[RMDB]
RNA sequence: GGGAACGACUCGAGUAGAGUCGAAAAGAUAUGGAACAUGACAUGCUCGAGUGUCGGAAACGACAUGAGAGCAACAGCAUGUUUCCUAAGUCAAAUCGAAAGAUCGUGUUCGCACGAUCUUUCGAAACUGGGACCAUAUGUUCGCAUAUGGUCCCAGAAAAGAAACAACAACAACAAC
Reactivity to 2A3 in 0.01 (KOAc 150mM, MgCl2 10mM, bicine 150mM(pH8.5), 24C), signal-to-noise 1, nucleotides 027 to 126: g010a000u080a020u130g000g020a020a000c010a010u000g150a100c020a090u080g010c020u000c020g030a010g030u000g040u010c000g000g000a100a040a030c020g000a000c000a060u130g020a040g030a010g040c010a000a000c010a010g000c000a000u020g010u040u100u090c010c010u040a080a000g080u020c070a040a040a210u030c000g010a000a000a000g000a010u000c000g000u020g070u090u180c300g060c050a000c010g030a000u000c000u000u000u000c000g000a000a000a020
Reactivity to DMS in 0.01 (KOAc 150mM, MgCl2 10mM, bicine 150mM(pH8.5), 24C), signal-to-noise 2, nucleotides 027 to 126: g010a040u020a300u030g000g000a020a020c010a050u000g000a080c080a290u010g010c010u000c000g000a300g010u000g020u000c000g000g000a140a070a270c020g010a000c000a000u000g000a300g000a020g040c000a020a020c230a140g000c000a000u000g010u010u010u000c000c010u000a110a110g020u000c060a060a090a110u000c000g000a000a010a000g000a010u020c000g010u000g030u000u000c180g010c000a010c020g000a000u000c000u000u000u000c000g000a000a030a050